This 177-nucleotide RNA was probed chemically with DMS. DMS adducts were read by reverse transcription with MarathonRT.
RNA sequence: GGGAACGACUCGAGUAGAGUCGAAAAGAUAUGGACAAUGUCAUUCACCGGCCAUAUUUCAUAUAUUCGGUAUUCGGAAACGAAUACACGAAGAAAUAUGGCCGGUGAAUGAGCAUUGUCCUAAGUCCGUAAGAAGUAAGUUCGCUUACUUCUUACGAAAAGAAACAACAACAACAAC
Reactivity to DMS in 0.01 (KOAc 150mM, MgCl2 10mM, bicine 150mM(pH8.5), 24C), signal-to-noise 8, nucleotides 027 to 126: g000a100u010a300u010g010g000a010c000a000a000u000g010u000c010a010u000u000c000a000c000c000g010g010c000c000a010u000a000u000u000u000c010a180u010a300u010a300u010u000c000g000g010u000a010u000u000c000g000g000a110a110a260c000g010a010a000u000a000c000a080c000g020a010a070g010a010a010a010u000a000u000g000g010c000c000g000g010u000g000a000a000u000g000a100g010c000a000u000u000g000u000c000c000u000a010a090g000u000c040
Conditions: 150 mM KOAc, 10 mM MgCl2 and 150 mM bicine (pH 8.5), 24 C. Source: RMDB library TTRINS, as collected in RNAgym.